Conditions: 150 mM KOAc, 10 mM MgCl2 and 150 mM bicine (pH 8.5), 24 C. Structure probing data (2A3) for a 177-nucleotide construct. Reactivities are given for positions 27 through 126. 2A3 adducts were read by reverse transcription with SuperScript II with manganese.
[RMDB]
RNA sequence: GGGAACGACUCGAGUAGAGUCGAAAAACCGUCGAGUACCAAGAGAAGGUACACGACGGAAUCACAACAUCUCAGUUGUGGAAAGCGCAAGCUUGCGCAUGGUAAGCAAAAAUCAAGGAAACUUGAAGCUGUGUACAGACUUCGGUCUGUACACAGCAAAAGAAACAACAACAACAAC
Reactivity to 2A3 in 0.01 (KOAc 150mM, MgCl2 10mM, bicine 150mM(pH8.5), 24C), signal-to-noise 2, nucleotides 027 to 126: a000c000c000g000u000c000g000a020g000u010a000c000c000a170a020g130a020g160a300a020g060g020u000a000c000a000c000g000a000c010g000g000a000a020u030c010a000c000a010a010c000a170u060c070u030c100a050g000u020u030g000u000g040g020a000a070a150g020c010g000c000a060a090g080c100u210u070g000c010g040c000a000u020g270g000u220a050a060g000c140a000a000a180a080a240u110c020a000a010g010g000a170a000a000c020u000u000g000a110a000